[RMDB]
RNA sequence: GGGAACGACUCGAGUAGAGUCGAAAAACAACCAUGAUGAAAUCGUUAGAUGGGGACAACUGAUUACUGUGACUGAUUCAUCUCGAUAGUAGAUCUGAUUUUAAACUCAUUUCCUUCGGGAAAUGAGGUUCGUAAUGCGGUUCGCCGCAUUACGAACAAAAGAAACAACAACAACAAC
Reactivity to DMS in 0.01 (KOAc 150mM, MgCl2 10mM, bicine 150mM(pH8.5), 24C), signal-to-noise 1, nucleotides 027 to 126: a000c180a080a130c070c010a110u000g000a060u000g010a110a130a110u000c030g020u000u020a030g010a060u000g000g000g000g020a060c120a160a040c050u000g020a080u020u020a080c120u020g000u000g010a120c170u010g000a140u010u000c040a110u000c000u010c020g010a020u010a090g010u010a040g010a020u000c020u010g000a120u000u010u020u000a020a070a220c010u020c000a020u000u000u000c000c000u000u020c140g020g020g000a000a000a000u000g010a000g000
Reactivity to 2A3 in 0.01 (KOAc 150mM, MgCl2 10mM, bicine 150mM(pH8.5), 24C), signal-to-noise 2, nucleotides 027 to 126: a020c090a050a060c060c020a040u110g010a000u050g010a040a010a020u040c040g040u130u140a040g000a020u020g030g010g030g080a010c000a030a020c050u040g050a270u160u160a150c050u050g000u010g150a050c010u040g000a090u050u010c010a010u020c020u000c020g020a020u010a050g020u010a020g010a160u040c010u010g030a110u010u010u040u290a070a140a010c000u010c000a000u010u020u000c000c000u020u010c140g040g000g010a000a000a000u000g000a000g010